[RMDB]
RNA sequence: GGGAACGACUCGAGUAGAGUCGAAAAUGGGCUCGAUCAGAUCCACGCUGUGGCCUAGCCGAAGAUAGGUCUGGUGGAGGUGCUCCCACUGUGCUUGCGCGACUUGGACGUCGACUGGCGCGGUGACGGCAUAAUUAAGCUUCGGCUUAAUUAUGCCAAAAGAAACAACAACAACAAC
Reactivity to 2A3 in 0.01 (KOAc 150mM, MgCl2 10mM, bicine 150mM(pH8.5), 24C), signal-to-noise 4, nucleotides 027 to 126: u100g020g020g050c030u000c040g140a040u020c030a030g030a080u030c020c000a030c120g200c100u150g040u130g100g000c010c040u020a020g000c020c020g050a040a010g020a050u030a020g000g050u030c020u020g060g000u030g040g030a030g030g060u080g050c010u020c020c000c000a000c010u020g000u020g010c000u070u030g040c130g010c000g210a010c020u050u160g250g090a050c090g010u000c000g000a010c000u000g000g000c000g000c010g030g000u020g020a050c080
Reactivity to DMS in 0.01 (KOAc 150mM, MgCl2 10mM, bicine 150mM(pH8.5), 24C), signal-to-noise 3, nucleotides 027 to 126: u010g000g010g010c030u000c050g010a050u000c020a050g010a140u010c010c030a040c140g010c090u000g020u010g010g000c070c040u000a040g000c010c030g010a040a030g000a030u000a030g010g010u000c010u000g010g020u000g000g020a050g000g020u000g000c040u000c020c030c000a030c010u000g020u000g000c010u000u000g000c250g000c010g000a010c010u000u020g000g010a170c230g000u000c000g000a040c010u000g000g010c010g010c010g010g020u010g010a110c220